[RMDB]
RNA sequence: GGGAACGACUCGAGUAGAGUCGAAAAUAAAAUGGUAACAACGGUUCCAAAGGAGCCGAAGGUCAUAGCUAUGGCAUCGAUCUAAAAUCUUAUCAAUUAGGUGACGAGCUUGGCACUGAUCAAAAAAUCUUUCACAUAUCUUCGGAUAUGUGAAAGAAAAAGAAACAACAACAACAAC
Reactivity to DMS in 0.01 (KOAc 150mM, MgCl2 10mM, bicine 150mM(pH8.5), 24C), signal-to-noise 2, nucleotides 027 to 126: u020a020a080a120a170u000g000g000u000a020a040c120a170a270c030g020g020u000u010c030c000a040a130a170g000g010a040g000c050c000g000a030a130g010g010u000c030a030u000a180g010c010u010a000u030g040g000c010a020u010c030g000a010u000c000u000a000a010a090a230u010c180u000u000a110u010c150a120a090u000u000a020g000g000u000g020a040c010g010a080g000c020u000u000g000g000c000a150c250u000g000a030u010c020a000a010a040a040a030a010
Reactivity to 2A3 in 0.01 (KOAc 150mM, MgCl2 10mM, bicine 150mM(pH8.5), 24C), signal-to-noise 1, nucleotides 027 to 126: u280a030a050a010a080u130g080g010u110a100a010c060a030a050c030g000g000u000u010c010c010a230a120a220g040g000a020g020c000c040g010a070a040g010g000u000c000a010u080a080g000c000u040a080u140g020g000c030a070u030c010g030a020u000c030u000a030a000a060a120u020c070u140u230a120u230c050a060a280u050u040a010g010g020u030g010a040c000g000a010g000c000u020u030g030g000c000a000c070u030g030a030u020c030a000a030a030a020a000a030
An RNA of 177 nucleotides, treated with DMS and 2A3 and read out base by base. Source: RMDB library M2PK90, as collected in RNAgym. The reactions ran in a buffer of 150 mM KOAc, 10 mM MgCl2 and 150 mM bicine (pH 8.5), at 24 C. 2A3 adducts were read by reverse transcription with SuperScript II with manganese. For DMS, 1,038 sequencing reads were counted.